[RMDB]
RNA sequence: GGGAACGACUCGAGUAGAGUCGAAAAGAUAUGGACCAGCAACAGCGUGUGUGUCGGAAACGACACCACGACAUGCUGCGUCCUAAGUCAAAACUAUCGUACACAUGUUCGCAUGUGUACGAUAGAACCGGUGUUGUUAGUUCGCUAACAACACCGGAAAAGAAACAACAACAACAAC
Reactivity to DMS in 0.01 (KOAc 150mM, MgCl2 10mM, bicine 150mM(pH8.5), 24C), signal-to-noise 2, nucleotides 027 to 126: g000a030u010a300u000g000g010a000c000c010a000g010c000a000a090c300a210g000c030g000u000g000u050g060u000g000u000c000g000g000a070a040a170c000g000a010c000a010c040c000a000c000g020a030c170a080u000g000c000u010g020c180g020u000c000c000u000a040a020g000u010c030a040a080a110a170c000u000a010u000c000g000u000a000c000a000c000a000u000g000u000u030c230g020c000a000u010g000u000g020u000a000c000g030a000u000a000g000a020a180
Reactivity to 2A3 in 0.01 (KOAc 150mM, MgCl2 10mM, bicine 150mM(pH8.5), 24C), signal-to-noise 2, nucleotides 027 to 126: g060a010u060a030u120g000g000a000c010c000a000g000c000a000a160c030a170g050c020g000u020g010u010g020u000g000u040c010g020g050a030a080a060c000g000a010c000a000c010c010a000c000g010a010c020a010u050g000c000u030g070c110g000u000c000c020u010a070a030g050u020c020a010a010a070a160c000u000a010u010c010g000u000a010c000a000c020a000u000g020u050u100c300g040c210a000u030g000u000g020u010a000c000g000a000u000a000g010a010a000
The data come from the RNA Mapping Database (RMDB), library TTRDEL. This 177-nucleotide RNA was probed chemically with DMS and 2A3. DMS adducts were read by reverse transcription with MarathonRT.